Chemical mapping of a 177-nucleotide RNA with DMS and 2A3. Values cover nucleotides 27 to 126. As a SHAPE reagent, 2A3 marks flexible, mostly unpaired nucleotides at the ribose 2'-OH. DMS adducts were read by reverse transcription with MarathonRT. For DMS, 2,314 sequencing reads were counted.
RNA sequence: GGGAACGACUCGAGUAGAGUCGAAAACGGUGAGCUAUGACGAGCGCACUGAUAUGGAUGGCCUCUCCGCCGGAGGUGCAUUCGGCCUUGUUGAGUAGUGGGCCGGGGCCGGGGCCGGUACUGGCCGGAGGUUCCUGAAAUUCGUUUCAGGAACCUCAAAAGAAACAACAACAACAAC
Reactivity to DMS in 0.01 (KOAc 150mM, MgCl2 10mM, bicine 150mM(pH8.5), 24C), signal-to-noise 1, nucleotides 027 to 126: c030g040g020u000g000a110g030c000u000a070u030g000a130c250g010a000g000c030g000c020a050c000u050g000a110u010a030u000g000g020a060u010g020g000c000c020u010c050u030c010c080g000c070c060g040g010a000g010g030u000g000c030a040u020u010c020g010g000c010c000u010u040g000u010u040g010a120g020u020a080g000u020g000g010g060c000c000g060g000g010g010c000c000g030g000g010g000c030c010g000g040u030a050c130u010g000g000c000c020g040
Reactivity to 2A3 in 0.01 (KOAc 150mM, MgCl2 10mM, bicine 150mM(pH8.5), 24C), signal-to-noise 2, nucleotides 027 to 126: c030g030g000u030g010a060g000c030u120a140u230g180a110c140g090a030g000c040g010c030a030c020u040g010a060u030a090u220g070g040a020u020g010g010c010c010u010c000u020c020c070g010c000c000g050g020a010g000g030u080g130c030a070u030u030c000g020g010c020c010u030u150g120u080u100g070a130g030u250a060g120u250g030g010g000c020c010g000g000g010g000c020c000g030g020g020g040c060c000g020g000u020a090c060u080g020g000c030c000g010